[RMDB]
RNA sequence: GGGAACGACUCGAGUAGAGUCGAAAAGAUAUGGAGAAUGUUGCAUAUGAACUACGAGGUCGGAAACGACCCUCGCAUAUGGACUCGUUCUCCUAAGUCAAAACGGUGUAUGUUCGCAUACACCGAACUAUCCCUAAAACUUCGGUUUUAGGGAUAGAAAAGAAACAACAACAACAAC
Reactivity to 2A3 in 0.01 (KOAc 150mM, MgCl2 10mM, bicine 150mM(pH8.5), 24C), signal-to-noise 8, nucleotides 027 to 126: g020a020u070a040u140g010g000a010g000a020a000u040g030u100u120g140c010a010u030a010u040g030a130a080c060u100a040c300g010a010g000g000u010c010g020g020a060a060a030c020g020a020c040c100c010u000c000g000c000a010u020a030u030g020g070a070c050u010c070g020u000u000c000u000c000c000u020a130a030g050u040c040a010a010a100a130c010g000g000u000g000u000a000u000g030u030u080c230g000c120a000u000a010c000a000c000c000g000a000a000
Reactivity to DMS in 0.01 (KOAc 150mM, MgCl2 10mM, bicine 150mM(pH8.5), 24C), signal-to-noise 7, nucleotides 027 to 126: g000a030u000a280u000g000g000a020g010a020a000u000g010u000u000g010c030a080u000a060u000g010a080a060c080u010a240c010g000a010g010g010u000c010g010g010a060a050a130c010g000a010c090c060c040u000c000g000c020a020u000a010u000g010g000a100c100u000c020g010u000u000c000u000c000c000u000a010a100g000u000c020a060a070a110a190c010g000g010u000g010u000a000u000g010u000u030c240g010c010a010u000a000c000a010c000c000g010a010a060